Chemical mapping of a 207-nucleotide RNA with 2A3 and DMS.

RNA sequence: GGGAACGACUCGAGUAGAGUCGAAAACCUGUGCCUAGGUAAGCCUAUAUCUGGGCGCACUACAGGCACUAUGUCGCAUCAUGGUCCCUGUGAACUCGAAGCUUGAUGCGACAAGUUUUGAGUGAUCUCAGACACUAUAGGCUUAGUUCGUGAGAGGAGGAGUAUAAAAUUUCGAUUUUAUACUCCUAAAAGAAACAACAACAACAAC
Reactivity to 2A3 in 0.01 (KOAc 150mM, MgCl2 10mM, bicine 150mM(pH8.5), 24C), signal-to-noise 4, nucleotides 027 to 156: c000c010u030g050u080g020c010c020u050a080g000g050u020a010a010g010c010c000u010a020u010a030u080c020u010g000g000g000c020g000c000a000c000u140a110c000a050g050g010c070a010c020u090a200u200g010u010c010g000c030a020u010c000a010u050g130g040u160c040c030c040u160g050u080g140a120a070c060u070c130g070a080a030g040c020u000u000g010a000u010g020c010g030a010c000a000a000g000u010u020u060u070g030a020g000u030g040a060u020c010u000c000a000g010a030c020a030c160u030a010u020a020g010g030c000u000u030a030g030u190u070c070g040u100g100a100g010a030g070g080
Reactivity to DMS in 0.01 (KOAc 150mM, MgCl2 10mM, bicine 150mM(pH8.5), 24C), signal-to-noise 3, nucleotides 027 to 156: c000c010u000g020u000g000c020c020u000a080g010g020u000a020a120g010c010c010u000a060u010a060u010c050u010g000g000g000c070g010c040a030c020u000a110c030a040g020g010c060a050c050u000a080u000g020u000c070g010c020a060u000c010a030u000g020g000u010c030c010c030u020g050u000g020a130a100c050u000c060g010a040a060g000c020u000u010g000a080u000g020c090g020a070c000a020a020g020u000u010u020u000g010a080g020u000g010a110u000c010u000c010a050g000a090c160a090c130u000a070u000a060g010g010c010u010u000a070g010u030u000c080g010u000g000a110g010a140g010g000
Reactivities are given for positions 27 through 156.
The DMS profile rests on 9,647 reads.
The RNA was probed in 150 mM KOAc, 10 mM MgCl2 and 150 mM bicine (pH 8.5) at 24 C.
For 2A3 the reverse transcriptase was SuperScript II with manganese.